[RMDB]
RNA sequence: GGGAACGACUCGAGUAGAGUCGAAAAGGGGUCCUGAGGGUCAAGAGGCUAGCGAGGCAUGGCUGAAGCCUCCACGGCCAUGCUACCCACCGCUAGCUACCCACCUUGUGAAAGCCAGGACGGAGGCACCCAAAAGGACAGUCUUCGGACUGUCCAAGUCGCGAAAUAAGUUCGCUUAUUUCGCGACAAAAGAAACAACAACAACAAC
Reactivity to 2A3 in 0.01 (KOAc 150mM, MgCl2 10mM, bicine 150mM(pH8.5), 24C), signal-to-noise 1, nucleotides 027 to 156: g090g030g000g000u000c000c010u020g030a100g020g070g030u160c110a110a040g050a030g090g040c000u000a000g000c000g000a010g000g000c010a010u010g020g000c010u000g010a040a000g020c000c010u020c040c000a000c000g020g020c010c000a000u000g010c010u020a040c010c040c040a060c000c010g010c020u030a000g000c010u000a000c000c000c000a050c000c040u140u110g130u060g290a180a070a020g030c130c010a000g030g000a000c050g000g010a000g010g020c010a000c020c000c000a010a110a020a040g000g010a000c000a000g000u000c040u060u060c170g200g030a000c000u000g000u000c000c000a000a000
An RNA of 207 nucleotides, treated with 2A3 and read out base by base.